Background: The record gives the reactivity of an RNA of 207 nucleotides to DMS and 2A3. For 2A3, 1,457 sequencing reads were counted.

RNA sequence: GGGAACGACUCGAGUAGAGUCGAAAAGCAACGCAAAGCCGCGGCAAGUGGAGUUCGCGAGAAGAGACUAGGCUUUGGUUUCUUCAAGUGAAGCGGUCACCAAUCAGGUGUGGUAGUUACCGUAAAAAUAACCGCUCUUUGUUCGCAAAGAGCGGAACUGCAUGAAAUUGUUCGCAAUUUCAUGCAGAAAAGAAACAACAACAACAAC
Reactivity to DMS in 0.01 (KOAc 150mM, MgCl2 10mM, bicine 150mM(pH8.5), 24C), signal-to-noise 1, nucleotides 027 to 156: g020c030a090a000c000g020c020a130a170a120g000c000c070g020c060g010g070c040a080a060g020u000g010g020a100g000u000u000c020g010c010g010a300g030a080a060g010a020g030a010c000u000a070g020g000c140u000u000u010g030g010u000u000u050c000u000u000c010a040a300g000u020g010a080a130g040c080g060g030u000c020a120c060c010a100a140u010c020a110g020g030u000g000u000g000g030u000a030g020u010u000a090c100c050g000u000a040a040a090a100a110u010a050a180c030c000g000c000u000c000u030u000u000g030u000u000c300g000c030a030a030a010g010a000g080c000g000g010a000a070
Reactivity to 2A3 in 0.01 (KOAc 150mM, MgCl2 10mM, bicine 150mM(pH8.5), 24C), signal-to-noise 2, nucleotides 027 to 156: g020c020a030a040c080g000c070a050a080a010g040c030c000g000c030g050g000c070a100a040g040u070g070g080a060g050u080u060c010g040c010g020a040g000a070a000g000a000g010a020c010u040a050g120g180c030u120u150u160g020g000u000u010u000c000u020u020c020a050a030g000u020g030a050a000g040c010g000g020u020c020a010c030c000a050a080u100c050a050g000g120u050g030u020g070g050u040a050g050u050u120a040c010c010g010u040a010a160a060a000a000u100a080a080c000c000g000c000u000c000u020u020u000g040u060u110c080g000c080a000a000a000g020a000g000c000g000g000a000a000
The DMS profile rests on 1,495 reads.